[RMDB]
RNA sequence: GGGAACGACUCGAGUAGAGUCGAAAACGGGGUUGGCUAUAGUUGAUUUCGAACCGUAUGCUUAUGUAUAUGGAAUGAUUUGUACGCUUUACGCAUGUGUACACUCACUCUCAGUUCACUCUUGUGAGAGAAGGGAGAGAGAGAUAUUUUGCGAUUAGGAUUCUUGGAUCUUCGGAUUCGGGAAUUCAAAAGAAACAACAACAACAAC
Reactivity to DMS in 0.01 (KOAc 150mM, MgCl2 10mM, bicine 150mM(pH8.5), 24C), signal-to-noise 1, nucleotides 027 to 156: c050g020g020g020g040u010u000g030g050c050u000a150u000a130g030u000u000g010a100u000u000u000c040g020a070a210c010c000g000u000a050u000g000c020u000u000a140u010g040u000a030u020a030u000g020g060a110a110u010g000a070u020u000u000g030u000a020c000g000c030u000u010u010a140c100g010c060a050u010g020u010g000u000a030c060a150c070u000c010a130c010u000c010u000c020a000g030u000u000c020a090c020u000c030u000u000g030u000g010a070g020a100g040a080a080g000g010g000a040g010a050g000a090g010a040g040a070u000a030u000u000u000u000g000c000g000a240u000u010a200
Reactivity to 2A3 in 0.01 (KOAc 150mM, MgCl2 10mM, bicine 150mM(pH8.5), 24C), signal-to-noise 1, nucleotides 027 to 156: c050g010g010g000g000u040u050g020g000c020u020a010u020a130g000u010u050g000a100u010u030u110c010g040a040a010c000c000g000u010a010u020g000c040u110u060a060u210g030u000a010u000a000u040g020g000a060a040u040g010a020u030u030u060g000u000a000c020g030c000u030u010u050a050c020g010c000a010u020g010u000g000u000a000c010a010c010u000c000a040c010u000c000u000c000a080g010u040u030c020a000c020u080c010u080u140g050u170g060a010g000a010g000a000a020g020g020g000a000g000a000g010a010g000a000g000a000u010a030u050u140u050u030g000c000g040a050u030u050a070
Record summary: The record gives the reactivity of an RNA of 207 nucleotides to DMS and 2A3. For 2A3, 746 sequencing reads were counted. DMS adducts were read by reverse transcription with MarathonRT. For 2A3 the reverse transcriptase was SuperScript II with manganese. The reactions ran in a buffer of 150 mM KOAc, 10 mM MgCl2 and 150 mM bicine (pH 8.5), at 24 C. For DMS, 2,840 sequencing reads were counted.